[RMDB]
RNA sequence: GGGAACGACUCGAGUAGAGUCGAAAAGUGGGCCGUGUAAGUAUACUAUGAGCACCAUGCGUUAAAGGCAUCACUCCACGAAUCUGAGGUGGUACGGAUUUCAGGUGGAGUAUUCGUAUACUGAAUAGGUAAUAUCGAUGUUCGCAUCGAUAUUACCAAAAGAAACAACAACAACAAC
Reactivity to DMS in 0.01 (KOAc 150mM, MgCl2 10mM, bicine 150mM(pH8.5), 24C), signal-to-noise 3, nucleotides 027 to 126: g050u000g000g000g030c050c040g060u000g020u000a040a030g000u000a000u020a010c030u010a110u020g000a140g010c110a140c130c150a050u010g010c010g000u030u020a060a220a230g000g000c040a050u000c100a080c000u000c000c030a030c020g010a020a000u010c010u000g010a080g010g010u030g020g000u040a080c030g000g010a010u000u000u030c210a140g000g030u000g000g000a000g020u000a010u010u010c090g000u010a010u020a020c010u000g010a080a100u040a030
Reactivity to 2A3 in 0.01 (KOAc 150mM, MgCl2 10mM, bicine 150mM(pH8.5), 24C), signal-to-noise 6, nucleotides 027 to 126: g100u140g040g010g010c030c040g040u050g010u080a030a020g010u010a020u010a040c040u020a030u130g080a020g050c040a040c080c020a040u040g010c020g050u100u240a160a070a080g140g000c000a020u050c020a010c010u000c010c000a010c020g020a020a020u000c010u020g020a020g040g130u110g070g060u140a070c040g000g000a010u040u110u190c060a050g000g200u000g000g010a000g000u010a030u050u070c030g000u010a000u000a050c010u010g030a080a060u080a190

The record gives the reactivity of an RNA of 177 nucleotides to DMS and 2A3. The data come from the RNA Mapping Database (RMDB), library OK1LIB. Reactivities are given for positions 27 through 126. For DMS the reverse transcriptase was MarathonRT. The RNA was probed in 150 mM KOAc, 10 mM MgCl2 and 150 mM bicine (pH 8.5) at 24 C.